[RMDB]
RNA sequence: GGGAACGACUCGAGUAGAGUCGAAAAGUUCAUCCCCUGAUCAAGGAUGCCCGAAACGCUGAGGCGGAAAGCAAAUUAAAUAACGUCAACCCAUCGGGACGGUUGGCCAGUUAAGAAGUGAGGAUUCAAAAGAUCGAACCGUUCGCGGUUCGAUCAACGGUGUUUAAGUGUUCGCACUUAAACACCGAAAAGAAACAACAACAACAAC
Reactivity to 2A3 in 0.01 (KOAc 150mM, MgCl2 10mM, bicine 150mM(pH8.5), 24C), signal-to-noise 1, nucleotides 027 to 156: g030u050u070c030a010u050c000c000c000c030u070g030a070u120c020a040a030g020g000a000u010g070c040c000c050g070a010a080a000c080g000c070u120g020a020g100g000c010g050g000a060a050a010g020c110a010a070a080u110u230a080a080a090u270a060a050c090g010u000c000a000a030c000c010c010a090u110c060g030g040g030a010c030g000g020u000u000g020g000c020c010a000g010u040u040a040a030g020a110a000g010u020g070a030g020g020a030u070u040c050a050a040a080a110g020a000u000c000g000a000a000c000c000g000u040u030c130g000c070g160g000u010u000c000g020a000u000c000a000a000